[RMDB]
Record summary
An RNA of 207 nucleotides, treated with DMS and 2A3 and read out base by base. For 2A3, 7,150 sequencing reads were counted. The reactions ran in a buffer of 150 mM KOAc, 10 mM MgCl2 and 150 mM bicine (pH 8.5), at 24 C. For DMS, 2,070 sequencing reads were counted.

RNA sequence: GGGAACGACUCGAGUAGAGUCGAAAAGGGGUCGAGAAGCAGGAGGGUUGAGAGGUGUGGCUGAAGCCUCCACGGCCACACUACCCACCUCAACCUCCCCACCCUGCAUUCUCGACGGAGGCACCCAAAUCGUCAUGGUCUUCGGACCAUGACGAAAGCUAUGUAGUAUCUUCGGAUACUACAUAGCAAAAGAAACAACAACAACAAC
Reactivity to DMS in 0.01 (KOAc 150mM, MgCl2 10mM, bicine 150mM(pH8.5), 24C), signal-to-noise 2, nucleotides 027 to 156: g020g000g040g020u000c000g000a050g010a060a000g040c120a040g000g020a180g010g000g040u000u000g010a050g000a180g060g020u020g000u020g000g000c010u000g000a050a110g050c000c000u010c030c020a300c110g010g000c000c020a020c000a050c010u020a070c020c020c020a300c020c000u000c000a030a080c010c030u020c300c070c010c120a300c050c020c010u000g020c020a200u000u000c020u030c000g020a020c120g000g010a030g050g020c000a040c040c010c000a020a080a120u020c030g050u000c020a060u000g020g020u000c020u000u010c300g020g000a040c000c020a000u030g000a000c010g000a000a010a110
Reactivity to 2A3 in 0.01 (KOAc 150mM, MgCl2 10mM, bicine 150mM(pH8.5), 24C), signal-to-noise 2, nucleotides 027 to 156: g070g010g020g010u010c000g000a000g000a000a000g010c000a000g000g000a000g000g020g000u000u000g000a000g000a010g010g000u000g000u000g000g000c000u010g020a100a000g010c010c000u000c000c000a010c010g010g010c010c000a010c010a010c000u020a020c030c040c020a050c010c000u000c000a000a000c000c000u020c030c000c000c000a020c000c000c000u000g000c050a300u000u010c000u010c000g000a000c010g000g000a000g000g010c010a020c000c000c000a030a080a040u040c000g000u040c010a010u000g000g000u000c010u050u100c260g080g000a000c000c000a000u000g000a000c000g000a000a000a000